[RMDB]
RNA sequence: GGGAACGACUCGAGUAGAGUCGAAAAUGAGUAAAGAGCAGGAGAAGAAGCUAGAACGACACUGUCGUUCUGCUACAACCUGCAAUGCCCUUUAUGUCACCCUUUUCGGCAAAAUGAUCGCGCGUGCUGGGAGAGCAGGCAAUUUAGAUAAAAUCCAGCGCUCGAUAUUAUUCGUAAUAUCGAGCGCAAAAGAAACAACAACAACAAC
Reactivity to 2A3 in 0.01 (KOAc 150mM, MgCl2 10mM, bicine 150mM(pH8.5), 24C), signal-to-noise 1, nucleotides 027 to 156: u150g000a000g020u020a010a090a100g070a010g000c000a020g030g020a110g000a250a000g090a070a000g030c080u120a090g010a070a000c000g020a000c090a050c300u220g000u010c000g000u000u000c000u000g000c000u000a020c000a050a080c000c000u000g000c000a000a000u020g000c000c000c000u000u110u000a050u040g060u000c010a090c100c090c120u000u030u100u070c030g020g010c010a020a050a130a160u200g040a050u030c070g000c010g000c030g180u020g000c000u010g000g000g030a160g020a000g080c000a010g000g010c020a010a020u060u060u130a050g010a030u100a060a090a060a000u000c020c000a020